[RMDB]
RNA sequence: GGGAACGACUCGAGUAGAGUCGAAAAGAUAUGGAGAGUCAAUGGCAUACUACCCACCUCGGAAACGAGAGGUAUGAACUACCAUUAACUCUCCUAAGUCAAAGCACAAGACUUCGGUCUUGUGCAAGUUACGAAUGAGGUUCGCCUCAUUCGUAACAAAAGAAACAACAACAACAAC
Reactivity to DMS in 0.01 (KOAc 150mM, MgCl2 10mM, bicine 150mM(pH8.5), 24C), signal-to-noise 4, nucleotides 027 to 126: g000a030u020a300u000g000g010a020g010a010g000u010c020a010a000u010g010g000c030a080u000a170c070u000a030c000c010c060a260c270c000u000c000g000g000a130a070a140c000g000a000g010a060g000g000u000a000u000g010a030a080c160u020a090c010c000a010u000u000a050a010c000u000c000u000c000c000u000a000a050g000u000c070a100a090a190g010c000a000c000a010a010g010a010c000u000u010c170g020g000u000c000u010u000g020u000g000c010a010a010
Reactivity to 2A3 in 0.01 (KOAc 150mM, MgCl2 10mM, bicine 150mM(pH8.5), 24C), signal-to-noise 4, nucleotides 027 to 126: g040a010u070a050u160g000g000a000g000a010g020u040c030a020a010u000g010g030c070a080u090a300c040u040a040c030c020c030a170c050c010u000c000g010g010a040a060a040c020g010a000g000a030g050g010u020a080u200g030a070a090c090u170a100c200c000a000u000u000a010a010c000u000c000u030c000c000u000a040a000g000u030c050a130a070a040g000c000a000c010a000a010g000a010c000u050u220c300g070g000u000c000u000u000g000u000g000c000a000a000

Overview
Source: RMDB library TTRDEL, as collected in RNAgym. Chemical mapping of a 177-nucleotide RNA with DMS and 2A3. For 2A3 the reverse transcriptase was SuperScript II with manganese. The reactions ran in a buffer of 150 mM KOAc, 10 mM MgCl2 and 150 mM bicine (pH 8.5), at 24 C.